[RMDB]
RNA sequence: GGGAACGACUCGAGUAGAGUCGAAAAAACAACUAUAGUUUACCAGCGUGUGAGCCGGUCUAUCAAUGUGAAGUCCAACACAGGCUGGGCAUUUUAUGUCCGUGCUAAAAAUGGCGACUUUUCGGCAGUUGCUACAGAUAAUGGAACGAUGUCCGAACCAAUUGAUAAGGUUCGCCUUAUCAAUUGGAAAAGAAACAACAACAACAAC
Reactivity to DMS in 0.01 (KOAc 150mM, MgCl2 10mM, bicine 150mM(pH8.5), 24C), signal-to-noise 2, nucleotides 027 to 156: a060a050c010a050a040c020u000a030u000a080g000u000u010u000a060c010c020a170g020c140g020u010g020u000g010a060g020c030c010g010g010u010c050u000a150u000c060a040a090u000g040u000g000a070a030g000u000c020c010a080a120c040a060c050a210g020g010c010u000g010g010g010c020a010u010u000u000u000a020u010g010u000c000c000g000u010g000c010u000a010a060a050a080a090u000g010g020c000g030a050c060u010u000u000u010c020g020g030c050a110g020u000u000g000c020u020a140c040a130g020a120u000a090a090u010g030g000a090a040c080g010a150u010g010u000c030c000g010a170a280
Reactivity to 2A3 in 0.01 (KOAc 150mM, MgCl2 10mM, bicine 150mM(pH8.5), 24C), signal-to-noise 7, nucleotides 027 to 156: a000a000c100a040a050c080u150a080u080a220g070u090u110u140a040c000c000a010g010c060g030u130g040u070g120a040g030c040c040g040g010u000c040u080a160u100c090a160a150u110g040u040g060a070a020g010u000c030c010a040a010c010a010c010a030g040g000c000u020g000g010g000c020a010u080u110u110u300a060u090g030u000c020c070g110u100g050c030u080a080a060a050a060a070u070g030g020c060g020a030c010u110u090u040u040c010g030g010c030a060g010u100u030g030c010u030a030c020a030g120a150u210a180a090u180g060g010a040a030c030g070a080u120g050u030c000c010g000a000a020